Source information: The data come from the RNA Mapping Database (RMDB), library OK1LIB. This 177-nucleotide RNA was probed chemically with 2A3 and DMS. The reactions ran in a buffer of 150 mM KOAc, 10 mM MgCl2 and 150 mM bicine (pH 8.5), at 24 C. The DMS profile rests on 7,421 reads. DMS adducts were read by reverse transcription with MarathonRT. For 2A3 the reverse transcriptase was SuperScript II with manganese. The 2A3 profile rests on 7,220 reads.
[RMDB]
RNA sequence: GGGAACGACUCGAGUAGAGUCGAAAAUCGUGAGAUGUGGUGCCUCACGCGCUCGAGGCGUCCGUGGUCAGAGAGACCACUGACGCAAAAACUCGAGCGCAAAUAAAGGGCAUUACAUGUAGAAUAACCCUAUUAUCAGGUUCGCCUGAUAAUAGGGAAAAGAAACAACAACAACAAC
Reactivity to 2A3 in 0.01 (KOAc 150mM, MgCl2 10mM, bicine 150mM(pH8.5), 24C), signal-to-noise 5, nucleotides 027 to 126: u150c070g020u120g130a170g010a070u010g010u000g000g000u000g000c000c000u110c020a100c130g000c000g000c000u000c000g000a000g000g000c000g000u000c000c000g000u010g000g000u000c030a050g110a060g020a010g000a300c000c000a000c000u000g000a000c000g000c000a150a110a010a010a000c000u000c000g000a000g000c000g000c000a010a010a000u100a020a060a020g020g000g000c000a000u000u000a000c000a000u040g070u120a050g090a140a080u150a110a090
Reactivity to DMS in 0.01 (KOAc 150mM, MgCl2 10mM, bicine 150mM(pH8.5), 24C), signal-to-noise 3, nucleotides 027 to 126: u030c150g000u030g000a160g020a030u000g020u010g000g020u000g000c000c000u000c100a100c240g000c000g050c000u000c010g010a010g000g000c010g000u000c000c070g040u000g010g000u020c010a160g010a200g000a210g040a000c000c000a000c000u010g010a010c020g020c060a030a020a070a100a300c000u000c000g000a010g020c000g010c010a020a040a040u040a120a110a100g010g000g010c000a010u000u000a010c010a020u000g010u020a060g000a140a050u050a100a250